[RMDB]
RNA sequence: GGGAACGACUCGAGUAGAGUCGAAAAGAUAUGGAAGUACUACCCACCAUACGCAAGCAAUGAUGUCGGAAACGAUUGAGCUUGUGUAUGAGGUACUUCCUAAGUCAAACAUAGGUUCGCCUAUGAACUUGUACAUGCAGUUCGCUGCAUGUACAAGAAAAGAAACAACAACAACAAC
Reactivity to 2A3 in 0.01 (KOAc 150mM, MgCl2 10mM, bicine 150mM(pH8.5), 24C), signal-to-noise 3, nucleotides 027 to 126: g070a060u210a160u240g000g000a000a000g000u000a000c010u170a190c040c000c010a020c010c000a000u010a000c000g010c000a000a000g010c010a070a300u280g050a040u160g080u040c000g030g100a060a060a080c010g050a000u030u160g020a010g010c000u000u010g010u000g000u000a000u010g000a000g000g010u000a000c000u010u000c000c000u010a040a020g090u080c130a190a080a150c010a060u030a000g040g060u040u050c300g080c040c000u030a030u030g000a030a070
Reactivity to DMS in 0.01 (KOAc 150mM, MgCl2 10mM, bicine 150mM(pH8.5), 24C), signal-to-noise 3, nucleotides 027 to 126: g010a090u000a210u010g010g020a020a000g000u000a000c000u000a120c020c000c040a300c130c000a020u000a000c000g000c000a000a000g000c000a130a150u000g010a100u000g000u010c000g000g000a070a090a110c030g010a020u000u000g000a080g010c010u010u000g010u000g000u000a000u000g000a070g000g000u000a010c000u000u000c000c000u000a030a040g010u000c080a090a080a160c040a010u010a010g000g020u010u010c220g060c000c020u000a010u000g040a090a120